[RMDB]
RNA sequence: GGGAACGACUCGAGUAGAGUCGAAAACGUAAUAUGUUCGCAUAUUACGAAAUCUCCAAUCAUGGCUUACCAGGAUCCUCCGAUGAAUUAAAGCCCUCGGUAAAAGGAGCGGGUUCGCCCGCUCCAACGAUGCUAUUUUGUUCGCAAAAUAGCAUCGAAAAGAAACAACAACAACAAC
Reactivity to 2A3 in 0.01 (KOAc 150mM, MgCl2 10mM, bicine 150mM(pH8.5), 24C), signal-to-noise 2, nucleotides 027 to 126: c000g030u000a010a000u000a010u020g000u030u060c090g010c090a000u000a000u010u010a010c000g000a050a010a010u040c030u080c020c010a010a100u100c060a160u180g050g000c010u020u030a040c020c030a000g040g030a050u060c000c050u020c040c080g050a080u080g080a100a250u150u110a130a030a000g000c040c010c010u040c070g090g030u110a050a050a070a130g000g010a000g000c000g010g040g040u010u030c120g080c000c030c000g000c030u000c020c000a000a000
Reactivity to DMS in 0.01 (KOAc 150mM, MgCl2 10mM, bicine 150mM(pH8.5), 24C), signal-to-noise 2, nucleotides 027 to 126: c000g030u000a000a020u000a000u000g010u000u020c170g010c000a000u000a000u000u000a000c000g000a040a100a160u000c040u020c010c120a090a080u000c110a030u020g010g010c060u010u000a070c030c060a070g000g020a060u000c060c050u000c040c030g000a070u000g010a120a060u010u010a070a110a260g030c020c000c000u000c030g000g010u040a110a080a100a160g000g010a000g050c000g000g010g020u000u020c210g020c010c010c000g000c010u000c000c000a010a030